[RMDB]
RNA sequence: GGGAACGACUCGAGUAGAGUCGAAAAGGCACGACUGCUAAAGACUAACGCAGACGUCCUAAGGCGGGCUCAGCGGGGAAGGAAACCACGCGUGGAGCACAAGGGCACAAGCCUGCUUGAGACUGUUCCUAUUGCGGGACUGUUUGGGGGAAACCCUCCAUAUUCCAGACUUCGGUCUGGAAUAUGGAAAAGAAACAACAACAACAAC
Reactivity to 2A3 in 0.01 (KOAc 150mM, MgCl2 10mM, bicine 150mM(pH8.5), 24C), signal-to-noise 2, nucleotides 027 to 156: g030g000c090a010c010g120a050c050u040g030c000u020a040a020a100g170a140c130u080a100a000c110g040c000a000g030a050c010g000u030c000c000u010a070a090g090g040c020g050g000g040c000u010c010a010g000c000g000g050g010g040a100a130g090g110a160a140a140c000c030a080c040g080c010g210u120g170g020a020g030c020a040c060a040a040g040g040g000c000a040c050a140a030g050c050c000u030g000c040u050u060g010a050g010a090c030u110g030u020u020c000c000u020a200u030u240g020c030g030g020g030a010c030u080g030u040u100u070g040g000g010g010g030a020a030a120c020c000c030u050